This 207-nucleotide RNA was probed chemically with 2A3.
RNA sequence: GGGAACGACUCGAGUAGAGUCGAAAAAGACGGAAACCCAUCGACUGCCACCAGAUGCUGCAUCACCUGAUCACUGAUGGCUCAACGGUAUCCGGCGGUACAACUGAAUACUUGUAGCUGCCUUUUGAAAAGGAGUUCAUCUUCGGAUGAACUCCAAGAACUUGCAAGAGUUCGCUCUUGCAAGUUCAAAAGAAACAACAACAACAAC
Reactivity to 2A3 in 0.01 (KOAc 150mM, MgCl2 10mM, bicine 150mM(pH8.5), 24C), signal-to-noise 1, nucleotides 027 to 156: a000g070a010c050g010g040a120a000a030c030c010c000a040u090c060g120a080c050u050g030c020c030a040c050c010a020g050a110u070g010c020u010g040c030a050u030c000a030c000c050u030g040a050u070c040a000c070u000g000a010u030g020g010c010u040c080a080a040c010g000g000u010a020u060c000c000g010g000c000g030g000u010a010c010a030a070c070u130g120a130a060u090a180c090u050u050g000u020a010g050c030u070g020c020c020u180u200u020u130g090a090a050a020a050g000g000a000g010u000u010c000a010u010c000u050u030c160g080g000a000u020g000a000a000c010u000c000c000a030a000
Record summary
For 2A3, 545 sequencing reads were counted. Values are in units of 0.01, from 0 to 300, in steps of 10. Values cover nucleotides 27 to 156.